[RMDB]
RNA sequence: GGGAACGACUCGAGUAGAGUCGAAAAGAUAUGGACAUUGUGAGAACAACAGCUGGUCGAUCGGAAACGAUCGCCAGACAUGUUCCCAAUGUCCUAAGUCAAAGUUAUCUUGUUCGCAAGAUAACAACAACUGGCAUCUGUUCGCAGAUGCCAGUUGAAAAGAAACAACAACAACAAC
Reactivity to 2A3 in 0.01 (KOAc 150mM, MgCl2 10mM, bicine 150mM(pH8.5), 24C), signal-to-noise 2, nucleotides 027 to 126: g020a000u050a020u080g010g000a000c040a020u030u050g100u200g170a300g100a290a060c230a090a060c070a300g030c020u030g000g210u300c190g010a000u000c000g040g000a070a000a000c020g010a000u010c000g020c000c010a000g020a010c010a070u300g060u010u020c050c000c000a010a000u000g010u000c000c000u010a050a000g010u000c050a180a080a020g020u020u020a000u030c010u000u020g060u050u100c200g040c190a010a040g010a000u040a000a010c000a000a020
Reactivity to DMS in 0.01 (KOAc 150mM, MgCl2 10mM, bicine 150mM(pH8.5), 24C), signal-to-noise 1, nucleotides 027 to 126: g010a020u000a090u000g000g000a020c000a000u000u000g020u020g020a280g000a020a010c010a100a090c270a240g000c020u000g000g000u010c090g030a000u000c000g000g020a000a010a050c000g010a000u000c000g010c000c010a000g020a000c090a140u010g010u000u000c010c000c000a020a000u010g030u000c000c000u020a000a130g000u010c000a100a170a160g000u000u000a010u000c010u010u000g000u000u010c260g040c010a050a020g000a000u000a000a010c000a120a160